The record gives the reactivity of an RNA of 177 nucleotides to DMS and 2A3.
The RNA was probed in 150 mM KOAc, 10 mM MgCl2 and 150 mM bicine (pH 8.5) at 24 C.
Values are in units of 0.01, from 0 to 300, in steps of 10.
It was measured as part of the RMDB library TTRDES.
The 2A3 profile rests on 61,149 reads.

RNA sequence: GGGAACGACUCGAGUAGAGUCGAAAAGAUAUGGACAUCGUACCUCGCUCGCAACCCCGCGAAAUCGGAAACGAUUUCGCGCGACGUACGAGUGUCCUAAGUCAAAACAAGUGGUUCGCCACUUGAACGUAUAAAUAACGUUCGCGUUAUUUAUACGAAAAGAAACAACAACAACAAC
Reactivity to DMS in 0.01 (KOAc 150mM, MgCl2 10mM, bicine 150mM(pH8.5), 24C), signal-to-noise 9, nucleotides 027 to 126: g010a040u000a300u010g010g010a010c010a070u000c010g010u000a010c000c140u000c040g030c040u010c290g010c130a100a240c010c010c010c010g030c000g010a000a010a010u000c000g010g000a140a090a220c000g010a010u000u000u000c000g010c000g010c020g020a010c250g000u000a010c000g000a050g020u000g020u000c000c000u000a020a110g010u000c040a110a070a160a220c020a010a010g020u000g000g010u000u010c300g020c000c000a010c000u000u000g010a080a180
Reactivity to 2A3 in 0.01 (KOAc 150mM, MgCl2 10mM, bicine 150mM(pH8.5), 24C), signal-to-noise 7, nucleotides 027 to 126: g030a020u080a050u160g000g000a000c000a010u010c010g000u000a000c010c050u050c060g030c030u100c070g220c080a110a130c010c000c000c010g000c000g000a000a010a000u010c010g000g020a060a040a040c010g000a000u000u000u010c000g000c000g000c010g010a020c020g000u000a000c000g020a110g250u110g000u000c010c000u020a110a020g040u020c030a010a020a130a210c010a020a000g000u000g070g040u070u120c300g070c100c000a010c000u000u010g020a050a010